[RMDB]
RNA sequence: GGGAACGACUCGAGUAGAGUCGAAAAAACUCUUUAAGGCAAUAACGAACUAAUUCUAAGCAAGUAAUGGAGAAAUGCCCGGGUCACUAUCUAGCCAUAAUAGUGCUUGACAGUAUGAUACUAACUGAAUAUGGUAAACCGUUCGCGGUUUACCAAAGAACCAUUAAGACUUCGGUCUUAAUGGUUCAAAAGAAACAACAACAACAAC
Reactivity to DMS in 0.01 (KOAc 150mM, MgCl2 10mM, bicine 150mM(pH8.5), 24C), signal-to-noise 1, nucleotides 027 to 156: a060a050c000u000c000u010u010u000a120a060g020g000c010a020a090u000a120a110c090g000a100a150c140u000a060a110u010u020c100u000a100a220g000c040a080a100g010u020a090a080u000g000g020a080g000a040a070a120u000g020c050c010c000g040g020g000u000c030a030c010u000a020u000c000u000a000g020c010c010a160u000a030a090u010a090g010u020g060c050u000u000g030a060c010a020g020u000a050u020g010a120u000a060c080u000a060a140c120u000g050a040a050u010a130u000g030g020u020a000a010a020c010c000g040u000u000c300g070c010g000g000u000u000u000a000c020c000a000a000a160
Reactivity to 2A3 in 0.01 (KOAc 150mM, MgCl2 10mM, bicine 150mM(pH8.5), 24C), signal-to-noise 2, nucleotides 027 to 156: a000a000c110u110c050u040u130u040a160a020g020g000c050a110a140u100a170a060c030g040a040a010c030u140a150a070u220u010c070u040a060a080g060c070a060a050g080u150a040a080u180g010g000a020g020a050a050a030u030g010c000c090c020g000g080g000u110c010a000c010u010a010u010c040u030a030g030c000c000a040u080a210a020u100a150g090u090g040c010u000u060g030a000c010a010g040u050a020u080g100a080u090a190c040u040a130a000c010u040g050a090a150u170a080u210g010g000u000a000a000a020c000c000g020u060u060c140g000c000g080g020u030u000u000a000c000c000a000a000a000
Structure probing data (DMS and 2A3) for a 207-nucleotide construct. Reactivities are given for positions 27 through 156. The data come from the RNA Mapping Database (RMDB), library M2RFPK. The reactions ran in a buffer of 150 mM KOAc, 10 mM MgCl2 and 150 mM bicine (pH 8.5), at 24 C. For 2A3 the reverse transcriptase was SuperScript II with manganese.